[RMDB]
RNA sequence: GGGAACGACUCGAGUAGAGUCGAAAAAUACUUCUCAGGAUGGCGCGUUGCAGGCCAACAAGAUCCAGGGACUGUACAGAAUUUUCCUAUACCUCGAGUCGGGUUUGGAAUCUAAGGUUGACUCGCUAAAACUUUACGUGGUUCGCCACGUAAAGAACUUAUUACGAUUCUUCGGAAUCGUAAUAAGAAAAGAAACAACAACAACAAC
Reactivity to DMS in 0.01 (KOAc 150mM, MgCl2 10mM, bicine 150mM(pH8.5), 24C), signal-to-noise 2, nucleotides 027 to 156: a080u000a000c020u010u000c020u000c010a140g020g020a080u000g040g040c080g030c110g050u000u020g010c030a120g010g000c030c030a030a040c100a110a280g020a090u000c020c020a090g000g020g000a040c130u000g030u000a120c040a140g050a100a170u000u000u000u010c030c000u000a140u000a040c050c000u010c010g000a030g100u000c010g000g010g050u000u020u000g000g030a070a060u000c090u030a110a090g020g010u000u010g000a060c090u000c000g000c030u000a030a070a150a090c000u000u000u010a000c000g010u000g020g000u000u000c300g020c000c000a020c000g000u000a000a000a000g010a020a090

Chemical mapping of a 207-nucleotide RNA with DMS. Values are in units of 0.01, from 0 to 300, in steps of 10. Conditions: 150 mM KOAc, 10 mM MgCl2 and 150 mM bicine (pH 8.5), 24 C.